[RMDB]
RNA sequence: GGGAACGACUCGAGUAGAGUCGAAAAGCUGGACUCAACGAAAAACCGGAAGCACCUCAAAGGAGGAUCUCGUGGGUAAAGUAACAGCGCAGAUUAUCGGAUGGACUGACGAGCAGGACGCGGAACUGACCCGCCUCGCCGGGACCAUGCCGCCGCACACUACAUACUCGUUCGCGAGUAUGUAGUGAAAAGAAACAACAACAACAAC
Reactivity to 2A3 in 0.01 (KOAc 150mM, MgCl2 10mM, bicine 150mM(pH8.5), 24C), signal-to-noise 4, nucleotides 027 to 156: g010c010u010g010g020a040c030u010c090a090a050c090g120a100a060a040a060a080c040c020g020g050a080a000g050c040a050c000c030u020c030a160a200a060g220g020a030g020g000a090u010c050u000c070g030u130g020g040g000u100a090a100a030g020u030a100a060c010a050g030c010g000c040a020g000a130u080u170a070u300c020g000g010a010u020g020g000a010c020u040g030a030c020g000a010g020c040a080g080g070a050c060g020c040g010g030a090a090c040u100g100a130c000c000c000g000c000c030u030c030g020c040c000g000g040g030a040c020c020a010u080g100c000c000g010c010c020g000c010a040
Reactivity to DMS in 0.01 (KOAc 150mM, MgCl2 10mM, bicine 150mM(pH8.5), 24C), signal-to-noise 2, nucleotides 027 to 156: g000c020u010g000g010a170c040u010c020a100a160c070g000a050a050a070a130a040c060c030g000g010a060a110g020c050a150c000c030u000c030a050a110a120g000g010a070g030g010a050u000c020u000c030g020u000g030g020g010u000a050a080a110g020u000a060a070c070a020g010c080g000c040a100g000a130u000u000a090u010c000g000g040a170u000g020g010a150c020u000g040a040c000g010a040g000c050a080g020g020a120c050g000c060g000g020a080a200c070u020g000a150c010c000c000g030c080c020u000c060g010c050c000g000g000g000a070c010c020a030u000g000c010c000g020c040c040g060c030a260

Conditions: 150 mM KOAc, 10 mM MgCl2 and 150 mM bicine (pH 8.5), 24 C. An RNA of 207 nucleotides, treated with 2A3 and DMS and read out base by base. 2A3 adducts were read by reverse transcription with SuperScript II with manganese. The 2A3 profile rests on 2,636 reads. For DMS, 3,914 sequencing reads were counted.